The data come from the RNA Mapping Database (RMDB), library OK2TST.
The record gives the reactivity of an RNA of 177 nucleotides to 2A3 and DMS.
2A3 adducts were read by reverse transcription with SuperScript II with manganese.
For DMS the reverse transcriptase was MarathonRT.
The reactions ran in a buffer of 150 mM KOAc, 10 mM MgCl2 and 150 mM bicine (pH 8.5), at 24 C.
As a SHAPE reagent, 2A3 marks flexible, mostly unpaired nucleotides at the ribose 2'-OH.
For DMS, 1,167 sequencing reads were counted.
[RMDB]
RNA sequence: GGGAACGACUCGAGUAGAGUCGAAAAUAAGAAGAUGCGGGCCAGCCUCAGGCAAAUGAGCUCGUUGAUGAGACAAGUUCUCGGUGGUCACGGCGAGGAAACGUUGGAUUCAGAUGAGGACAUUCAACCACGUACUCAUGUUCGCAUGAGUACGUGGAAAAGAAACAACAACAACAAC
Reactivity to 2A3 in 0.01 (KOAc 150mM, MgCl2 10mM, bicine 150mM(pH8.5), 24C), signal-to-noise 2, nucleotides 027 to 126: u160a070a020g090a080a040g050a040u120g020c000g020g020g000c000c010a000g020c040c000u170c030a000g000g080c000a010a070a110u060g010a030g040c020u000c020g000u040u010g020a070u110g010a010g020a030c090a240a000g010u030u030c030u010c020g010g110u050g050g000u050c100a030c140g000g000c000g000a060g030g130a120a150a030c090g000u030u030g040g000a030u180u130c040a030g150a210u000g000a030g010g000a000c010a020u140u030c020a050a050
Reactivity to DMS in 0.01 (KOAc 150mM, MgCl2 10mM, bicine 150mM(pH8.5), 24C), signal-to-noise 2, nucleotides 027 to 126: u000a090a100g030a060a080g010a090u010g030c010g050g010g040c000c030a090g000c000c020u030c110a140g030g010c040a070a130a140u010g000a060g020c050u000c040g000u000u000g010a210u010g020a200g000a050c120a050a050g000u000u000c040u010c010g010g030u000g000g040u000c020a100c080g000g010c030g030a140g010g000a040a060a080c060g060u000u010g000g000a060u000u050c040a070g000a130u000g000a040g000g000a020c090a080u000u000c070a080a140